[RMDB]
RNA sequence: GGGAACGACUCGAGUAGAGUCGAAAACAGUGAUGGAAACAUCACUGAAAAACGUGCUAGCGCGGCACGAAAAAGUCGAUCGAAUACCGAUCGACAAGCGCUAAAGUCAUGCCGAAAGGCAUGACAAAGCGAUAUGCACUUUCGAGUGCAUAUCGCUAAAAGAAACAACAACAACAAC
Reactivity to DMS in 0.01 (KOAc 150mM, MgCl2 10mM, bicine 150mM(pH8.5), 24C), signal-to-noise 1, nucleotides 027 to 126: c000a010g000u000g010a000u010g050g060a230a110a210c010a000u000c000a000c000u060g000a030a030a050a040a170c000g000u000g000c000u000a070g000c000g070c000g050g070c030a000c010g000a060a000a000a000a030g040u000c000g000a000u010c000g000a300a120u060a160c260c000g010a040u050c000g000a000c020a040a010g000c010g040c000u070a110a040a130g000u000c000a000u010g020c000c000g000a230a100a050g000g050c000a000u000g000a000c010a000a010
Reactivity to 2A3 in 0.01 (KOAc 150mM, MgCl2 10mM, bicine 150mM(pH8.5), 24C), signal-to-noise 2, nucleotides 027 to 126: c010a000g010u000g010a000u010g030g030a080a020a000c020a010u000c000a000c000u000g000a020a010a000a000a000c000g000u000g000c000u050a070g000c000g010c010g020g000c030a000c080g140a060a000a000a000a000g000u000c000g000a000u000c010g010a040a060u140a300c130c020g000a000u000c010g000a000c000a000a000g000c000g000c000u000a100a010a010g000u000c000a000u000g000c000c000g070a060a020a030g000g000c000a000u000g000a000c000a000a000
This 177-nucleotide RNA was probed chemically with DMS and 2A3. Values are in units of 0.01, from 0 to 300, in steps of 10. For 2A3, 2,484 sequencing reads were counted.